[RMDB]
RNA sequence: GGGAACGACUCGAGUAGAGUCGAAAACAUUACGAAUUCAGUCGCAAAUUGUAGAAUUAGCUACUCUACGAUUUAGUGAGCGUUCGUAACGUUGUAAUAUAAUAUAGUCUUUGGAAGGAUUAUAUUGGAGCCGCGGACAAGUUCGCUUGUCCGCGAACGCAAUGAGAUGGUUCGCCAUCUCAUUGCGAAAAGAAACAACAACAACAAC
Reactivity to 2A3 in 0.01 (KOAc 150mM, MgCl2 10mM, bicine 150mM(pH8.5), 24C), signal-to-noise 1, nucleotides 027 to 156: c020a040u000u080a000c000g000a000a010u050u080c100a080g220u050c020g000c010a000a000a000u000u010g010u000a000g020a010a030u070u010a040g020c020u100a040c000u000c000u010a000c000g020a000u000u000u090a080g000u010g030a060g110c020g000u000u000c000g000u000a020a050c040g000u000u000g010u070a100a110u040a060u040a080a010u000a000u010a000g000u000c040u100u110u120g220g120a110a110g000g000a010u020u000a000u010a000u000u010g030g030a030g070c060c010g000c010g000g000a000c000a000a000g020u030u160c230g100c090u000u000g000u000c000c000g030c000g000a000a010
Source: RMDB library M2RFPK, as collected in RNAgym. The record gives the reactivity of an RNA of 207 nucleotides to 2A3. The reactions ran in a buffer of 150 mM KOAc, 10 mM MgCl2 and 150 mM bicine (pH 8.5), at 24 C. For 2A3, 822 sequencing reads were counted.